Chemical mapping of a 177-nucleotide RNA with DMS and 2A3.
RNA sequence: GGGAACGACUCGAGUAGAGUCGAAAAGAUAUGGACUGAACUACAGCUCGAAGUAGCGAAGAACUCGGAAACGAGGGAGCUAUUAGAGCUGCAGUCCUAAGUCAAAACGCAUGCUUCGGCAUGCGAACGUAAUACCGGUGUUCGCACCGGUAUUACGAAAAGAAACAACAACAACAAC
Reactivity to DMS in 0.01 (KOAc 150mM, MgCl2 10mM, bicine 150mM(pH8.5), 24C), signal-to-noise 3, nucleotides 027 to 126: g000a070u000a300u010g020g010a020c010u010g000a040a060c040u020a230c000a000g000c000u010c010g000a100a180g000u000a000g010c000g020a090a160g000a150a140c000u020c010g000g000a120a070a180c010g000a020g000g000g010a090g010c000u000a000u000u000a300g030a010g010c000u000g010c010a010g000u000c020c000u000a020a040g000u010c000a080a080a170a220c040g010c020a010u000g000c010u000u020c180g020g030c000a010u000g010c010g010a020a030
Reactivity to 2A3 in 0.01 (KOAc 150mM, MgCl2 10mM, bicine 150mM(pH8.5), 24C), signal-to-noise 2, nucleotides 027 to 126: g030a000u060a060u120g000g010a010c010u010g000a100a060c090u220a130c300a000g000c000u010c010g020a080a010g000u010a000g010c020g210a300a030g030a100a020c010u000c020g020g050a030a110a040c000g000a010g010g010g000a030g000c000u000a050u300u060a270g000a000g000c010u000g000c000a000g000u000c000c000u000a120a020g070u020c040a000a020a080a160c030g000c000a000u000g000c000u090u090c300g200g000c000a020u000g000c000g000a050a010
DMS adducts were read by reverse transcription with MarathonRT. The RNA was probed in 150 mM KOAc, 10 mM MgCl2 and 150 mM bicine (pH 8.5) at 24 C.